[RMDB]
RNA sequence: GGGAACGACUCGAGUAGAGUCGAAAAGGAGACAGAUAAUGCAGCACCUUGGCUGGCAAUAACUUGCCCGUUUUCGGCCAGUAGAAUGGCUUUAACGCCGGAGGUGCCCAGAUCGAUGCCAAGGUACAGUAGUAUACCCCUUCGGGGGUAUACUACUAAAAGAAACAACAACAACAAC
Reactivity to DMS in 0.01 (KOAc 150mM, MgCl2 10mM, bicine 150mM(pH8.5), 24C), signal-to-noise 2, nucleotides 027 to 126: g010g010a080g000a120c080a060g010a050u010a050a050u000g020c080a130g020c040a020c010c000u010u000g000g040c030u000g000g000c010a040a030u000a080a150c200u000u000g010c050c040c070g030u000u000u000u020c300g000g010c000c010a070g000u000a160g010a150a160u000g010g000c000u000u010u020a050a130c110g000c060c060g010g020a060g000g000u000g000c000c030c050a070g000a020u020c060g020a130u000g020c000c010a020a040g010g010u000a040c130
Structure probing data (DMS) for a 177-nucleotide construct. Reactivities are given for positions 27 through 126. DMS adducts were read by reverse transcription with MarathonRT. For DMS, 1,161 sequencing reads were counted. Conditions: 150 mM KOAc, 10 mM MgCl2 and 150 mM bicine (pH 8.5), 24 C. Values are in units of 0.01, from 0 to 300, in steps of 10.